This 177-nucleotide RNA was probed chemically with DMS and 2A3.

RNA sequence: GGGAACGACUCGAGUAGAGUCGAAAAAGUAAAAUUGUUAUUCAAUGUCAGUGGUUUGUGGAGUUCAUAUCGUUCUACCACUUUGGAAGAAAUCCACCGACUGUUAAACAAAGUUAAAGAGACGUUACAUGACAUCUGGAUUCGUCCAGAUGUCAUGAAAAGAAACAACAACAACAAC
Reactivity to DMS in 0.01 (KOAc 150mM, MgCl2 10mM, bicine 150mM(pH8.5), 24C), signal-to-noise 3, nucleotides 027 to 126: a060g030u060a080a070a090a110u000u030g000u010u000a140u030u020c070a080a030u020g000u000c000a020g040u000g010g000u020u040u050g010u000g010g020a060g020u000u010c040a120u040a080u070c190g000u000u000c010u020a120c000c010a010c010u000u010u030g010g060a120a140g000a080a070a070u010c000c000a010c010c030g000a020c000u000g020u000u000a050a040a050c050a000a070a110g010u000u020a050a080a070g000a080g000a110c110g000u010u020a130
Reactivity to 2A3 in 0.01 (KOAc 150mM, MgCl2 10mM, bicine 150mM(pH8.5), 24C), signal-to-noise 6, nucleotides 027 to 126: a000g210u190a030a070a070a080u110u050g040u020u050a210u130u090c110a100a140u180g010u010c010a010g010u010g020g030u060u110u120g000u010g000g020a030g000u020u020c030a060u190a180u300c150g010u000u000c080u120a300c000c020a010c000u060u040u120g090g050a110a020g060a080a090a030u030c030c000a000c020c000g000a010c000u020g020u130u180a090a030a010c040a000a070a060g080u170u220a120a040a000g160a010g010a020c060g040u100u050a020
For 2A3, 2,496 sequencing reads were counted. For DMS the reverse transcriptase was MarathonRT.